[RMDB]
An RNA of 177 nucleotides, treated with 2A3 and read out base by base.
2A3 adducts were read by reverse transcription with SuperScript II with manganese.
Conditions: 150 mM KOAc, 10 mM MgCl2 and 150 mM bicine (pH 8.5), 24 C.
RNA sequence: GGGAACGACUCGAGUAGAGUCGAAAAACUGCGAUUCGUUUCAUGUUAAUCCAGCUCCUUAAUUCGAUGAAUGACUUUUAAUAGUGAUUGUUCAAACACUUUUUGAUCUUGCUUUGUAAAAGGUGGGCCGAAAACUCAAGUUCGCUUGAGUUUUCGGAAAAGAAACAACAACAACAAC
Reactivity to 2A3 in 0.01 (KOAc 150mM, MgCl2 10mM, bicine 150mM(pH8.5), 24C), signal-to-noise 2, nucleotides 027 to 126: a000c070u060g020c090g050a010u000u000c070g130u010u130u260c300a200u190g080u050u080a070a000u000c020c000a000g000c000u020c020c000u080u300a090a210u120u120c100g010a030u110g040a080a100u050g170a120c000u000u090u160u090a120a050u020a130g050u050g100a180u030u000g000u000u010c030a020a120a010c020a040c110u090u180u000u060u150g080a130u020c020u020u130g000c040u050u020u190g150u130a000a000a000a000g020g000u000g090g000g000

Reactivities are rounded to 0.1 and cut off at 0 and 3.
Reactivities are given for positions 27 through 126.